An RNA of 177 nucleotides, treated with DMS and 2A3 and read out base by base. High DMS reactivity at an A or C suggests that its Watson-Crick edge is free. The RNA was probed in 150 mM KOAc, 10 mM MgCl2 and 150 mM bicine (pH 8.5) at 24 C. For DMS the reverse transcriptase was MarathonRT.
RNA sequence: GGGAACGACUCGAGUAGAGUCGAAAAAGUGCUUACUGGAUCAUCUAAAUGAUUUUUAGCUGUGAUUAACUCACGUUUAUCCGCUUUUGUGAAAAUGGACUCUUGUACUUCUUCAGUACUACCAUCACAUAGGUGGCUGAUUCGUCAGCCACCUAUGAAAAGAAACAACAACAACAAC
Reactivity to DMS in 0.01 (KOAc 150mM, MgCl2 10mM, bicine 150mM(pH8.5), 24C), signal-to-noise 2, nucleotides 027 to 126: a100g020u010g000c040u010u000a050c200u010g010g020a010u010c020a010u000c150u000a070a060a040u000g000a030u010u000u000u010u020a010g030c190u000g000u010g000a050u010u000a020a050c170u000c090a070c100g010u010u000u010a100u010c020c010g000c060u000u000u010u010g000u000g010a070a060a080a060u000g000g010a090c060u000c160u020u000g020u000a020c030u000u010c190u000u000c180a040g000u000a030c020u000a110c030c010a070u000c160a130
Reactivity to 2A3 in 0.01 (KOAc 150mM, MgCl2 10mM, bicine 150mM(pH8.5), 24C), signal-to-noise 2, nucleotides 027 to 126: a010g120u070g030c010u060u040a050c080u110g040g000a010u040c010a030u020c060u170a070a220a030u090g060a080u090u010u000u090u250a040g000c030u020g060u050g130a030u030u100a040a020c000u030c130a000c040g000u020u000u090a050u020c000c020g020c090u040u090u050u080g070u010g120a060a040a010a040u050g040g040a060c000u040c060u150u060g000u030a040c000u050u130c000u080u060c050a000g010u010a000c030u000a020c000c020a070u120c000a000